[RMDB]
RNA sequence: GGGAACGACUCGAGUAGAGUCGAAAAACAUCUACGUUGUUCGCCAAGCUACUGAAGGAUUGGCUCGUUUGAUUGAGUCAAAAGGUGGAAACGAGAAAGAACGCGGUGUAGCAAUUGCCUACGAUAGAAUGCACUAAGCCUUCGGGCUUAGUGCAUUAAAAGAAACAACAACAACAAC
Reactivity to DMS in 0.01 (KOAc 150mM, MgCl2 10mM, bicine 150mM(pH8.5), 24C), signal-to-noise 1, nucleotides 027 to 126: a060c090a130u010c000u000a060c010g030u010u000g000u000u000c010g000c000c040a180a140g030c040u000a000c060u000g000a150a160g000g000a180u000u000g010g010c000u000c010g000u030u010u000g000a030u000u060g000a000g010u000c060a050a020a060a250g000g000u000g000g000a010a120a120c050g020a120g000a210a070a080g000a030a030c070g000c300g010g000u030g020u000a040g040c100a080a160u010u030g000c070c050u010a080c080g000a190u010a030g030